[RMDB]
RNA sequence: GGGAACGACUCGAGUAGAGUCGAAAAAGCCACCGCUACGGCGGUGGCAAGUAGAAAAGUUGGUGCUUAGACCACGCCCUCUACCGUAAUAAUAGAUAACUAGGCGAGUAUCAGUACGCUGAUACAAAAAACACUCACACGUUCGCGUGUGAGUGAAUCACUGCUCAAAGUUCGCUUUGAGCAGUGAAAAAGAAACAACAACAACAAC
Reactivity to 2A3 in 0.01 (KOAc 150mM, MgCl2 10mM, bicine 150mM(pH8.5), 24C), signal-to-noise 1, nucleotides 027 to 156: a000g010c010c000a010c010c000g000c010u030a030c250g250g000c000g000g020u000g000g000c000a000a000g020u000a000g010a000a080a000a020g070u080u040g020g000u110g030c090u120u060a040g020a080c000c010a010c010g020c020c000c000u000c010u000a020c030c030g140u070a070a000u100a160a040u120a270g100a070u020a180a000c040u000a010g030g020c040g020a000g040u000a000u020c000a000g010u010a040c240g000c130u000g010a020u080a020c180a000a170a000a000a000a000c020a000c000u010c000a020c000a000c000g040u050u050c300g010c000g060u020g000u000g000a000g000u010g020a010a010